[RMDB]
RNA sequence: GGGAACGACUCGAGUAGAGUCGAAAAGAUAUGGAAUCAACAACAGCGACCCAUCGGAAACGAUGGUGUCGACAUGUUGAUUCCUAAGUCAAAGGAUGGUUGCUUACUUCGGUAAGCAACCAUCCAACUGCAAUUCAAAGUUCGCUUUGAAUUGCAGAAAAGAAACAACAACAACAAC
Reactivity to DMS in 0.01 (KOAc 150mM, MgCl2 10mM, bicine 150mM(pH8.5), 24C), signal-to-noise 1, nucleotides 027 to 126: g000a050u030a260u000g020g000a010a000u000c000a010a000c010a000a080c300a140g000c040g010a000c000c000c010a000u000c000g000g000a130a020a060c000g020a020u000g010g000u020g000u000c000g020a070c070a070u010g010u000u000g000a020u000u000c000c000u030a010a070g000u000c030a050a070a140g030g020a000u000g000g000u000u000g000c000u000u000a000c000u000u030c250g020g020u010a000a000g020c040a000a000c020c000a020u000c000c030a020a050